[RMDB]
RNA sequence: GGGAACGACUCGAGUAGAGUCGAAAAAAUCAGCCAUCAAUGCCGUGACGGGUGGACCCAUCGCGUUUGGCAACGACGGGGCUAGUCUGAUCCCAGCCGACUAUGAAAUCCUGAACCGGGUAGCCGACAUCACGUCAUAUUUCGAUAUGACGUGAUGAAAAGAAACAACAACAACAAC
Reactivity to DMS in 0.01 (KOAc 150mM, MgCl2 10mM, bicine 150mM(pH8.5), 24C), signal-to-noise 4, nucleotides 027 to 126: a060a050u000c070a060g000c010c020a210u010c070a100a180u010g010c020c040g020u000g000a050c040g010g010g030u000g000g010a150c080c070c020a050u000c040g000c020g010u010u010u020g010g010c010a080a060c210g010a030c070g020g010g000g030c040u010a050g010u010c030u000g000a080u010c010c020c020a110g030c060c110g000a040c060u000a050u010g010a080a120a090u000c030c020u000g000a090a100c100c050g000g000g000u000a050g010c020c030g000a180
Reactivity to 2A3 in 0.01 (KOAc 150mM, MgCl2 10mM, bicine 150mM(pH8.5), 24C), signal-to-noise 2, nucleotides 027 to 126: a010a010u140c040a010g060c020c000a010u040c020a040a090u120g070c020c050g120u080g010a020c010g000g000g030u070g040g030a110c070c050c010a000u030c090g060c000g060u050u070u090g030g000c010a020a010c030g050a030c050g090g000g000g040c020u010a010g040u000c020u040g040a060u020c000c000c000a000g010c010c020g010a010c000u040a020u230g100a090a070a030u060c000c000u060g020a080a090c010c020g000g000g070u050a040g010c030c020g050a030
Structure probing data (DMS and 2A3) for a 177-nucleotide construct. For DMS, 3,476 sequencing reads were counted. 2A3 adducts were read by reverse transcription with SuperScript II with manganese.